[RMDB]
RNA sequence: GGGAACGACUCGAGUAGAGUCGAAAAGUCUCUUAGAGAGCUUGGCCGUCGGGCCUUACACCCCGACUUGCUGAGUUUCUCUAGGAGAGUCCCUUUCCCAGCCAGAGGUGGCUGGUCAAACAAUACCAAAACUCUUGCUAGUUCGCUAGCAAGAGAACAAAUGUUACGUCUUCGGACGUAACAUUUGAAAAGAAACAACAACAACAAC
Reactivity to 2A3 in 0.01 (KOAc 150mM, MgCl2 10mM, bicine 150mM(pH8.5), 24C), signal-to-noise 2, nucleotides 027 to 156: g020u010c010u000c000u000u000a000g000a000g000a000g010c010u000u000g030g000c000c000g000u010c010g000g030g010c020c030u040u080a080c080a040c030c010c010c000g010a010c040u070u300g010c020u020g000a000g020u040u300u010c000u000c000u000a000g000g000a000g000a000g010u010c000c000c000u010u160u020c010c010c030a010g000c010c000a000g000a000g030g010u020g000g020c020u090g050g020u200c050a000a000a060c060a020a080u010a030c000c000a030a020a070a140c000u000c000u000u000g000c000u000a000g030u080u040c260g020c110u000a000g010c000a010a000g000a000g000a020a000
Reactivity to DMS in 0.01 (KOAc 150mM, MgCl2 10mM, bicine 150mM(pH8.5), 24C), signal-to-noise 1, nucleotides 027 to 156: g010u000c000u000c000u000u050a070g000a010g000a050g040c000u000u010g010g020c000c300g000u000c020g030g010g000c050c020u000u000a110c180a210c300c000c000c010g010a030c010u000u010g030c020u010g010a050g000u000u000u010c000u000c010u000a050g020g020a090g020a030g010u000c030c010c030u000u000u010c080c000c010a090g030c000c000a030g000a300g030g020u010g020g040c000u020g020g000u020c040a000a040a050c080a020a060u000a050c070c000a100a100a120a150c010u000c000u010u000g010c010u000a010g000u010u000c300g040c020u000a010g000c000a010a000g000a010g010a070a110